[RMDB]
RNA sequence: GGGAACGACUCGAGUAGAGUCGAAAAUCUCAGGGGCUUUAUCCAAAGCAAGUAAACUAAGUUGCCAUUGAGAUAAGCGUAUUAAGUUAUGCCAAAUAUCUUCGAUUUGUUGCUUACUUUGUGCCGAGGGCUGGGUUAAAGAAAAAGCGUAUAAUUGCAGACAUGUAGGGUUCGCCCUACAUGUCUGAAAAGAAACAACAACAACAAC
Reactivity to DMS in 0.01 (KOAc 150mM, MgCl2 10mM, bicine 150mM(pH8.5), 24C), signal-to-noise 1, nucleotides 027 to 156: u000c040u000c040a100g010g000g010g020c030u000u010u000a060u010c050c050a060a090a080g040c020a040a030g030u010a060a080a070c120u010a030a130g010u010u010g040c070c080a160u030u000g020a110g030a060u000a070a060g010c010g010u000a030u010u000a110a170g010u000u000a010u000g000c040c020a020a050a180u010a060u000c010u010u000c080g010a180u010u000u040g030u010u010g000c020u040u020a080c020u010u000u010g000u000g040c070c050g010a100g020g040g000c030u020g020g020g020u000u000a050a070a130g000a080a100a060a060a110g010c040g020u000a050u000a070a130u020u000g010
Reactivity to 2A3 in 0.01 (KOAc 150mM, MgCl2 10mM, bicine 150mM(pH8.5), 24C), signal-to-noise 2, nucleotides 027 to 156: u020c010u000c010a010g060g030g030g050c030u050u060u080a020u060c030c000a060a020a000g000c040a040a090g010u160a040a120a090c110u090a100a010g090u030u030g030c050c020a090u010u080g030a020g030a040u030a030a020g000c010g000u060a090u020u060a170a030g230u010u050a020u050g000c020c000a000a140a120u110a070u070c110u150u090c050g090a180u000u020u150g020u010u050g000c010u070u020a070c030u010u030u020g070u060g030c020c000g010a040g040g010g020c000u040g050g010g020u020u110a060a100a050g070a000a050a060a040a000g070c030g030u070a080u070a120a130u170u200g000